[RMDB]
RNA sequence: GGGAACGACUCGAGUAGAGUCGAAAAUGGCCUGGUGCCUUAAAGGAGCUGGAUUAUGACGCGUGCGCUGGCGGUAGUGGCGGCGCUGGCACUCGUUGCGCUGGGCUGGCAGUCGUGGCGGCUUAACAGCGCCAGCCACACCAUCGAAACGCAGCGCCUAUAGCUUAACGUUCGCGUUAAGCUAUAGAAAAGAAACAACAACAACAAC
Reactivity to DMS in 0.01 (KOAc 150mM, MgCl2 10mM, bicine 150mM(pH8.5), 24C), signal-to-noise 2, nucleotides 027 to 156: u000g000g020c000c020u000g000g020u000g020c000c010u000u000a040a120a090g020g010a080g030c030u000g020g020a140u000u000a110u000g000a070c060g020c020g010u000g010c010g020c010u000g010g030c030g040g020u000a090g100u000g040g040c020g050g020c000g000c000u000g050g000c100a050c050u000c030g050u000u000g020c020g020c010u000g010g010g040c110u000g020g000c000a040g010u010c020g050u010g010g000c000g030g000c060u020u010a100a130c010a040g010c010g000c000c010a040g050c000c020a040c020a070c020c010a060u010c050g000a080a050a050c020g000c010a100g020c050g000c040
Reactivity to 2A3 in 0.01 (KOAc 150mM, MgCl2 10mM, bicine 150mM(pH8.5), 24C), signal-to-noise 6, nucleotides 027 to 156: u100g040g000c020c010u080g060g030u120g030c030c070u100u090a110a140a040g050g010a030g010c050u060g030g020a110u080u100a090u260g080a030c040g030c060g060u060g000c020g000c020u060g050g030c040g020g000u060a100g000u190g000g010c000g010g000c000g000c000u000g010g000c060a030c040u060c010g010u030u010g000c000g000c000u000g010g060g020c040u070g090g010c020a020g080u290c020g010u020g020g000c020g030g000c040u110u130a110a030c010a010g000c000g000c000c000a020g000c000c000a000c000a000c010c010a040u080c040g050a050a050a020c060g000c020a000g000c020g000c010

Chemical mapping of a 207-nucleotide RNA with DMS and 2A3. The RNA was probed in 150 mM KOAc, 10 mM MgCl2 and 150 mM bicine (pH 8.5) at 24 C. DMS adducts were read by reverse transcription with MarathonRT. The 2A3 profile rests on 6,171 reads. The data come from the RNA Mapping Database (RMDB), library OK3TST.